[RMDB]
RNA sequence: GGGAACGACUCGAGUAGAGUCGAAAACUCAAGUUCGCUUGAGCUAAAGAUAUGGAGCGACGGUGAGGGAAUGACUAUAUUACUCGGAAACGAGUAAUACGAAUCAUUCCUACCCACCACCGCCGCUCCUAAGUCCGUGUCCAUCCUUCGGGAUGAAAAAUCACUCGGAAUUCGUUCCGAGUGAUUUAAAAGAAACAACAACAACAAC
Reactivity to 2A3 in 0.01 (KOAc 150mM, MgCl2 10mM, bicine 150mM(pH8.5), 24C), signal-to-noise 3, nucleotides 027 to 156: c000u000c000a000a000g010u070u150c220g060c160u010u030g000a000g030c040u130a190a070a010g010a000u000a010u060g000g000a000g000c010g000a010c010g000g010u000g000a000g000g010g020a000a010u000g010a010c040u000a000u000a000u010u000a000c000u000c000g010g000a000a000a000c000g000a000g000u010a000a000u010a000c000g020a120a300u000c000a000u000u000c000c000u010a020c040c020c010a020c010c000a000c010c000g010c010c000g000c020u000c000c000u000a010a000g000u000c000c010g120u070g060u090c040c000a030u020c010c010u040u120c260g090g000g030a020u110g050a100a060
Reactivity to DMS in 0.01 (KOAc 150mM, MgCl2 10mM, bicine 150mM(pH8.5), 24C), signal-to-noise 1, nucleotides 027 to 156: c000u010c000a020a080g040u000u020c240g060c030u010u030g000a020g040c010u020a040a130a040g000a020u000a020u010g000g000a040g040c010g000a010c000g000g030u010g000a210g000g020g000a040a000u020g010a030c040u000a000u000a020u000u000a000c000u000c000g050g020a050a010a060c000g000a000g010u000a000a000u000a010c000g020a010a000u000c000a030u000u000c000c000u000a030c030c020c030a300c010c000a000c020c000g040c000c000g020c000u000c000c010u000a000a060g020u000c020c050g010u000g000u000c050c000a010u000c000c010u000u010c300g070g000g000a030u010g000a000a020
The record gives the reactivity of an RNA of 207 nucleotides to 2A3 and DMS. The 2A3 profile rests on 3,098 reads. The reactions ran in a buffer of 150 mM KOAc, 10 mM MgCl2 and 150 mM bicine (pH 8.5), at 24 C. Source: RMDB library RNAMAK, as collected in RNAgym. 2A3 adducts were read by reverse transcription with SuperScript II with manganese.